RNA sequence: GGGAACGACUCGAGUAGAGUCGAAAAAUAACUCCUGUUAGCAACGUGCGCAGAUACACACAGACAUGAGAUUCAGGGAACAACAGAGCCACACGUCAGAAACUUCCGUCAGCCGGACCUCCGGCACCCAAUUUAUAUCGUUCGCGAUAUAAAUUGGAAAAGAAACAACAACAACAAC
Reactivity to DMS in 0.01 (KOAc 150mM, MgCl2 10mM, bicine 150mM(pH8.5), 24C), signal-to-noise 4, nucleotides 027 to 126: a120u010a080a110c110u000c020c010u000g010u010u000a070g020c040a050a050c100g020u000g030c070g010c040a060g010a120u010a070c090a070c100a050c070a060g000a090c080a070u010g000a110g000a100u000u000c050a050g020g010g010a050a050c100a020a070c050a070g010a120g020c030c020a030c050a020c070g010u010c070a070g010a070a050a090c100u000u000c030c040g010u000c100a100g000c000c010g000g000a120c180c300u010c010c000g020g010c030a050c230
Reactivity to 2A3 in 0.01 (KOAc 150mM, MgCl2 10mM, bicine 150mM(pH8.5), 24C), signal-to-noise 4, nucleotides 027 to 126: a010u110a040a030c030u020c020c010u010g030u070u090a050g050c030a020a110c080g050u040g030c040g000c030a010g030a100u130a050c030a000c010a010c010a030g060a050c030a090u100g050a060g020a090u060u060c010a010g000g030g060a050a030c010a010a010c010a020g050a030g080c000c000a020c000a000c040g040u040c010a010g080a130a140a050c030u050u030c000c020g090u060c030a020g000c000c000g070g040a140c030c050u130c040c000g000g000c000a000c010